[RMDB]
RNA sequence: GGGAACGACUCGAGUAGAGUCGAAAACCCGGUGACCAUGCCCUGGCGCGACUCGGUGAACGCCAUCAUGCAGGCCUGGUAUCCGGGCCAGGCGGGUGGCCAGGCCGUUGCGGAGAUUGUGACCGGGAUAACAAUCCCUCUUCGGAGGGAUUGUUAUAAAAGAAACAACAACAACAAC
Reactivity to 2A3 in 0.01 (KOAc 150mM, MgCl2 10mM, bicine 150mM(pH8.5), 24C), signal-to-noise 2, nucleotides 027 to 126: c030c000c010g000g000u070g060a100c020c020a130u160g010c040c040c050u060g050g040c030g000c010g040a050c020u040c130g000g000u080g050a050a030c030g000c040c000a020u040c030a040u160g100c020a010g020g010c000c010u040g000g010u110a080u110c060c020g000g030g000c000c000a070g020g030c020g000g000g020u040g010g040c000c010a080g000g080c000c010g060u060u040g000c000g050g020a080g020a140u090u140g020u010g010a030c000c000g000g000g010
Reactivity to DMS in 0.01 (KOAc 150mM, MgCl2 10mM, bicine 150mM(pH8.5), 24C), signal-to-noise 3, nucleotides 027 to 126: c000c000c010g000g010u000g000a110c070c040a110u010g010c010c040c030u000g020g010c010g030c070g000a090c070u030c100g010g030u000g000a140a200c180g020c000c020a060u020c030a030u010g040c040a110g010g020c000c010u000g020g000u010a040u010c020c020g030g000g010c030c010a020g000g000c010g000g000g030u000g000g030c000c020a030g000g010c000c000g010u020u010g010c090g000g000a070g000a100u010u000g000u010g000a100c000c000g000g000g010